[RMDB]
RNA sequence: GGGAACGACUCGAGUAGAGUCGAAAAUUUAAGAGCGUAGAUGUCUCUGUCACGAUACGAGUAAGAGACUCUCGUGUACUACUGACGAAUGAGACAGAGACAUUUAUGCUCAGUGUCAGUCAAGGAACAUUCGAGAAUCGUUCGCGAUUCUCGAAUGAAAAGAAACAACAACAACAAC
Reactivity to DMS in 0.01 (KOAc 150mM, MgCl2 10mM, bicine 150mM(pH8.5), 24C), signal-to-noise 2, nucleotides 027 to 126: u000u010u000a130a130g010a040g010c000g020u000a040g010a000u000g010u000c000u000c000u000g000u000c010a110c090g000a040u000a060c030g010a050g010u010a080a080g030a170g040a190c120u000c090u000c080g000u000g010u000a130c110u000a100c080u020g010a080c100g000a110a080u010g020a130g010a000c000a010g000a040g030a020c010a010u000u000u000a010u000g010c000u000c010a040g010u030g000u000c070a050g040u000c090a040a090g010g020a150a160
Reactivity to 2A3 in 0.01 (KOAc 150mM, MgCl2 10mM, bicine 150mM(pH8.5), 24C), signal-to-noise 2, nucleotides 027 to 126: u140u180u080a200a060g000a010g000c000g010u000a000g000a030u010g010u030c000u020c000u020g000u000c030a030c070g070a000u020a030c020g020a010g000u030a080a100g100a040g020a300c010u020c000u000c050g000u010g040u050a100c090u040a030c030u090g170a030c050g100a190a090u140g060a070g000a110c010a000g000a010g000a000c000a000u000u010u020a000u000g000c010u020c010a000g000u000g060u000c050a000g010u060c060a050a040g190g020a110a040